[RMDB]
RNA sequence: GGGAACGACUCGAGUAGAGUCGAAAAGGCGGUCAAUGCCAACGGCAUCUACGUGUGCCGGGCAAUCGUCAGCCACCGGAUGCCCGAGGGUGUGGUGUUCGUCUACCACGUGCAGGAGCGCACCGUGGUCUAGCACGGGAUUCGUCCCGUGCUAGACAAAAGAAACAACAACAACAAC
Reactivity to 2A3 in 0.01 (KOAc 150mM, MgCl2 10mM, bicine 150mM(pH8.5), 24C), signal-to-noise 3, nucleotides 027 to 126: g010g000c020g020g000u080c060a070a120u080g030c010c020a100a050c020g000g000c000a010u000c040u210a110c120g130u190g020u070g150c000c010g010g000g000c010a020a110u130c040g030u020c020a020g050c020c000a030c020c010g000g010a050u070g020c040c000c000g030a120g090g070g020u100g030u070g020g040u050g050u070u110c030g050u010c030u040a050c000c010a010c030g020u050g020c020a080g010g220a120g090c070g000c040a020c020c050g080u070g070
Reactivity to DMS in 0.01 (KOAc 150mM, MgCl2 10mM, bicine 150mM(pH8.5), 24C), signal-to-noise 5, nucleotides 027 to 126: g030g010c010g010g010u000c110a090a090u000g000c010c000a080a230c160g010g010c010a010u000c010u010a120c300g010u010g010u000g010c020c020g010g000g010c020a040a050u000c090g000u000c040a220g010c050c010a070c080c010g000g000a060u000g000c010c010c020g000a200g010g020g010u020g010u010g010g010u000g010u010u000c090g000u000c110u000a090c030c020a030c030g010u000g000c010a100g000g000a110g000c150g010c040a030c050c080g030u000g000
Structure probing data (2A3 and DMS) for a 177-nucleotide construct. DMS adducts were read by reverse transcription with MarathonRT. Reactivities are given for positions 27 through 126. High 2A3 reactivity points to a flexible backbone, as in loops and unpaired stretches. DMS (dimethyl sulfate) methylates the pairing face of unpaired adenines and cytosines. The reactions ran in a buffer of 150 mM KOAc, 10 mM MgCl2 and 150 mM bicine (pH 8.5), at 24 C.